[RMDB]
RNA sequence: GGGAACGACUCGAGUAGAGUCGAAAAAACCCUUUAAGGCAAUAACGAACUAAUUCUAAGCAAGUAAUGGAGAAAUGCCAGGGUCACUAUCUAGCCAUAAUAGUGCUUGACAGUAUGAUACUAACUGAAUAUGGUAAACCGUUCGCGGUUUACCAAACAGUGAUAAUCAGUUCGCUGAUUAUCACUGAAAAGAAACAACAACAACAAC
Reactivity to 2A3 in 0.01 (KOAc 150mM, MgCl2 10mM, bicine 150mM(pH8.5), 24C), signal-to-noise 5, nucleotides 027 to 156: a000a010c050c000c000u040u080u030a120a030g030g000c030a050a090u120a210a060c090g050a030a040c070u070a080a090u150u030c030u170a080a040g040c060a050a040g030u130a070a100u150g090g000a090g020a100a100a010u070g020c010c010a030g020g000g010u020c010a000c030u010a020u030c000u020a040g010c000c020a060u050a170a070u030a200g060u080g080c020u040u040g040a020c010a010g040u070a060u120g120a040u090a150c050u070a220a010c030u050g060a060a080u160a080u140g000g000u000a000a000a000c000c000g010u020u040c140g010c020g130g010u000u000u000a000c000c000a000a000a000
Reactivity to DMS in 0.01 (KOAc 150mM, MgCl2 10mM, bicine 150mM(pH8.5), 24C), signal-to-noise 3, nucleotides 027 to 156: a080a050c000c000c010u000u000u000a100a120g000g000c020a050a080u010a090a100c060g010a100a140c050u000a100a090u000u000c040u000a130a130g040c040a040a110g030u000a090a070u000g010g000a130g000a090a080a100u000g020c010c000a050g000g020g000u000c020a040c000u020a020u000c050u000a070g030c040c070a130u000a090a090u000a060g040u010g040c020u000u000g000a020c020a010g010u000a040u010g040a090u000a060c040u010a040a160c050u010g000a040a090u000a120u000g000g000u010a020a000a020c000c010g030u010u010c280g030c040g000g000u000u000u000a000c000c000a010a010a070